This 177-nucleotide RNA was probed chemically with DMS and 2A3. It was measured as part of the RMDB library OK1LIB.
RNA sequence: GGGAACGACUCGAGUAGAGUCGAAAAAAAUUCUAAGGAAUCAGAUUGAGUCAAAAGCUUGACUAUGUUCUCCUUGGUAAUCUUUGCUUUGUUCAUCUUGAUCUGCUGACUUUACUAACUUUAAAGCAAACUGAUAGGAUUUCGAUCCUAUCAGUUUAAAAGAAACAACAACAACAAC
Reactivity to DMS in 0.01 (KOAc 150mM, MgCl2 10mM, bicine 150mM(pH8.5), 24C), signal-to-noise 5, nucleotides 027 to 126: a030a050a050u020u000c010u010a040a040g010g000a090a040u000c050a020g000a070u010u000g000a020g010u010c060a100a040a090a120g000c050u000u000g000a030c060u000a080u020g010u010u000c070u000c020c020u020u020g010g010u020a060a050u010c040u010u010u010g000c050u000u000u010g010u010u010c080a070u030c040u000u000g000a040u000c030u000g000c070u010g000a120c050u010u010u000a060c110u020a070a140c080u000u010u040a040a080a080g010c130
Reactivity to 2A3 in 0.01 (KOAc 150mM, MgCl2 10mM, bicine 150mM(pH8.5), 24C), signal-to-noise 5, nucleotides 027 to 126: a000a000a000u130u020c040u050a050a010g080g010a010a030u020c010a020g130a300u110u110g070a040g080u070c030a010a000a030a090g110c090u040u030g000a010c020u050a090u160g070u040u050c030u030c080c010u050u060g030g020u090a060a100u020c040u050u080u040g040c010u080u080u150g090u090u140c080a090u040c040u050u060g050a020u010c010u000g040c020u030g070a060c010u070u060u100a040c040u070a100a070c060u110u120u170a160a160a020g070c060
For 2A3, 1,899 sequencing reads were counted. The DMS profile rests on 12,627 reads.